[RMDB]
RNA sequence: GGGAACGACUCGAGUAGAGUCGAAAAGGUCAUCCUUCACAGGAUCGUGUGGAAGUCCUGCUCGGGGCGGAAGCAUUAAAACCAUUCGAGCUAGUCAAUGCGUGGCAUGUCUCUCCGCAGCGUGUUGUGUAUGAGAGUGGAUUCGUCCACUCUCAAAGAAUCGAAAGUAGUUCGCUACUUUCGAUUCAAAAGAAACAACAACAACAAC
Reactivity to 2A3 in 0.01 (KOAc 150mM, MgCl2 10mM, bicine 150mM(pH8.5), 24C), signal-to-noise 3, nucleotides 027 to 156: g060g020u070c030a050u020c020c020u170u210c050a040c010a030g140g010a160u110c100g030u050g000u050g060g060a060a030g030u030c000c010u030g040c040u040c090g070g000g020g000c000g000g020a020a000g010c020a010u040u140a020a050a010a020c010c000a010u040u040c110g030a040g050c180u160a070g170u060c040a060a070u050g010c060g080u020g030g000c010a010u020g060u020c020u000c000u000c090c000g020c040a070g040c050g010u020g020u020u010g000u000g040u010a090u160g000a000g000a000g000u000g000g000a010u000u030c080g050u030c020c000a000c000u040c000u010c000a000a000a000
Reactivity to DMS in 0.01 (KOAc 150mM, MgCl2 10mM, bicine 150mM(pH8.5), 24C), signal-to-noise 1, nucleotides 027 to 156: g070g020u010c030a130u000c000c010u020u040c120a110c110a090g000g000a010u000c040g000u010g050u000g000g020a120a130g000u000c010c010u000g020c010u010c070g030g000g040g030c000g010g030a160a130g020c040a100u000u010a040a190a150a040c020c020a150u000u000c030g000a140g020c040u010a040g000u000c060a130a100u020g020c080g070u010g020g020c090a060u000g020u000c010u020c000u000c000c060g020c000a110g040c000g000u000g030u040u020g070u000g030u000a060u010g030a030g030a030g030u000g000g000a020u000u010c300g000u000c000c000a020c000u000c020u010c000a010a020a110